[RMDB]
An RNA of 177 nucleotides, treated with 2A3 and read out base by base. Reactivities are given for positions 27 through 126. It was measured as part of the RMDB library RFM100. The reactions ran in a buffer of 150 mM KOAc, 10 mM MgCl2 and 150 mM bicine (pH 8.5), at 24 C.

RNA sequence: GGGAACGACUCGAGUAGAGUCGAAAAUGGUCAUUUUCAAAUAUUCCCCUUUUAUAUGCCCGUAAAAGACAAUAUACGUUAUAACAACGUUUUAUAAAAGCAGUAAACCCUUACGACACUUUAGGUUAAAGAAUCUUGCAUUCGUGCAAGAUUCUUUAAAAGAAACAACAACAACAAC
Reactivity to 2A3 in 0.01 (KOAc 150mM, MgCl2 10mM, bicine 150mM(pH8.5), 24C), signal-to-noise 2, nucleotides 027 to 126: u050g000g010u050c040a080u000u060u000u080c010a040a050a020u160a040u070u050c000c030c000c010u030u000u000u180a040u030a030u110g070c000c030c050g060u070a030a080a000a030g030a040c100a140a000u110a010u030a060c000g000u040u040a190u030a260a030c100a040a000c000g000u000u050u110u000a090u040a040a080a000a010g030c060a000g020u080a000a050a140c050c000c000u010u010a040c020g070a070c080a000c030u040u010u220a060g080g010u000u000